[RMDB]
RNA sequence: GGGAACGACUCGAGUAGAGUCGAAAAAGCCGGUCUACGGAUCGGCAAAACGUUCAUCUCGUUUUACGGGCCGCAUUAAGAUUGAAGCCAAGGAACGGGGACUUCAGACUACGACUACGGUCGUAGAUUACGCCUCCGAGUUUCGACUCGGAGGCAACCGUAAGAUAUCCUUCGGGAUAUCUUACGGAAAAGAAACAACAACAACAAC
Reactivity to 2A3 in 0.01 (KOAc 150mM, MgCl2 10mM, bicine 150mM(pH8.5), 24C), signal-to-noise 2, nucleotides 027 to 156: a000g010c020c000g000g000u020c020u030a060c290g060g000a000u000c000g000g020c000a020a020a040a000c060g010u080u080c060a160u050c020u000c010g000u010u000u000u160a070c060g020g000g040c000c010g040c070a040u150u110a150a080g110a240u000u170g080a080a020g010c000c020a060a090g100g000a010a010c010g000g010g000g040a040c030u140u090c120a040g030a120c010u030a000c000g000a000c000u030a000c250g080g020u000c010g000u000a000g000a000u050u090a010c160g010c000c000u050c000c010g000a000g000u030u030u070c150g140a010c000u000c000g000g000a000g000g000c000a000a010
Chemical mapping of a 207-nucleotide RNA with 2A3. It was measured as part of the RMDB library M2RFPK. The RNA was probed in 150 mM KOAc, 10 mM MgCl2 and 150 mM bicine (pH 8.5) at 24 C. For 2A3, 697 sequencing reads were counted.